[RMDB]
RNA sequence: GGGAACGACUCGAGUAGAGUCGAAAAGCAGGAACAUGAAAAUUGGAUUGCCGUGCGCUGAUCCCACUUGUAAUAGAGAUCAUGACCUUGAUAAUCUAACAAAUCGUGAACUUUUGCUAUUGAUGGCGAUGAAUUUACACUUCGGUGUAAAUUCAUCAAAAGAAACAACAACAACAAC
Reactivity to DMS in 0.01 (KOAc 150mM, MgCl2 10mM, bicine 150mM(pH8.5), 24C), signal-to-noise 4, nucleotides 027 to 126: g000c020a030g000g000a060a170c040a010u010g000a050a050a120a210u010u000g000g050a110u010u010g010c080c020g000u010g030c150g010c040u000g010a050u010c010c010c020a150c150u000u010g010u000a070a090u050a060g010a080g000a040u000c020a040u010g000a060c100c070u040u000g040a040u000a090a030u000c040u010a030a040c180a020a080a080u020c010g010u000g020a020a200c040u010u000u010u000g000c030u010a110u000u000g000a140u000g000g000c300
Reactivity to 2A3 in 0.01 (KOAc 150mM, MgCl2 10mM, bicine 150mM(pH8.5), 24C), signal-to-noise 6, nucleotides 027 to 126: g040c020a020g010g010a030a070c010a030u060g090a010a010a040a130u120u080g030g030a050u020u050g090c030c010g060u080g050c060g000c020u020g010a030u010c020c030c020a070c070u040u110g060u070a050a050u030a120g060a010g010a020u010c000a030u090g140a160c000c030u030u040g010a020u100a160a000u030c030u080a040a040c050a070a080a050u030c020g010u020g040a020a050c010u020u070u120u150g010c010u040a090u120u160g080a080u070g030g010c050